[RMDB]
RNA sequence: GGGAACGACUCGAGUAGAGUCGAAAAUAUGGUAGGCGGCGAGCGGUUUAUCGAGGAGAUCGCCUACGCGCUCGGCAAGGACCCGUUGGAGAUCCGCCGCGCCAAUUUCUAUGGCCAGCCGGGUUCCAUGGAUAAUAGGAUUCGUCCUAUUAUCCAUAAAAGAAACAACAACAACAAC
Reactivity to 2A3 in 0.01 (KOAc 150mM, MgCl2 10mM, bicine 150mM(pH8.5), 24C), signal-to-noise 9, nucleotides 027 to 126: u230a060u070g090g000u020a030g030g000c010g000g020c030g010a040g020c050g010g090u100u200u120a170u190c060g020a060g070g050a110g050a090u050c020g030c010c010u020a030c020g000c010g010c010u020c010g010g040c080a130a200g060g010a110c000c010c010g030u040u090g050g010a100g010a110u020c000c010g010c020c020g000c030g000c000c010a020a010u070u180u040c090u120a140u120g030g000c010c010a010g020c040c010g020g000g000u070u000c030c010
Reactivity to DMS in 0.01 (KOAc 150mM, MgCl2 10mM, bicine 150mM(pH8.5), 24C), signal-to-noise 9, nucleotides 027 to 126: u050a070u030g010g000u000a040g000g010c050g000g010c070g000a120g010c030g000g010u020u040u040a090u050c080g010a130g010g000a150g010a090u010c050g000c040c020u010a020c020g020c100g010c010u010c020g010g000c060a090a240g000g000a110c030c020c050g010u020u010g000g000a080g000a060u010c020c020g010c050c200g000c120g010c010c010a030a060u010u030u020c170u010a130u010g000g010c010c030a140g010c070c020g000g000g010u000u020c040c080

This 177-nucleotide RNA was probed chemically with 2A3 and DMS. The RNA was probed in 150 mM KOAc, 10 mM MgCl2 and 150 mM bicine (pH 8.5) at 24 C. For 2A3 the reverse transcriptase was SuperScript II with manganese. It was measured as part of the RMDB library OK1LIB. For DMS the reverse transcriptase was MarathonRT.